[RMDB]
Structure probing data (2A3) for a 207-nucleotide construct. It was measured as part of the RMDB library OK3TST. For 2A3, 327 sequencing reads were counted. Reactivities are given for positions 27 through 156.
RNA sequence: GGGAACGACUCGAGUAGAGUCGAAAAAGCUAUAAUAUCAGGCUAUGAUUUACGUGAUGUCAUUACAUCAUCAGAACUAAAGCUACCCACUGACCAGUGGAAGUGUCACCUCUUGAUCUCAGAUGUCUAUGAAAAAUUAACAGAUUUCACAGACCUGCCCCCUACCUAUUUUCGAAUAGGUAGGGGGAAAAGAAACAACAACAACAAC
Reactivity to 2A3 in 0.01 (KOAc 150mM, MgCl2 10mM, bicine 150mM(pH8.5), 24C), signal-to-noise 1, nucleotides 027 to 156: a000g130c120u120a150u220a130a120u110a060u190c010a000g050g010c000u000a040u130g120a130u020u000u040a010c060g080u000g010a000u070g010u090c200a130u080u150a010c020a020u020c000a000u020c040a040g000a140a030c020u110a290a030a000g040c000u010a140c000c040c000a020c020u060g160a140c110c000a100g000u070g080g000a110a000g000u000g110u040c010a060c040c000u070c060u060u070g020a120u000c060u000c010a010g020a090u080g050u000c040u040a040u070g050a090a070a000a050a090u120u190a080a100c110a150g120a190u030u010u040c000a000c090a070g000a100c070c000u160g090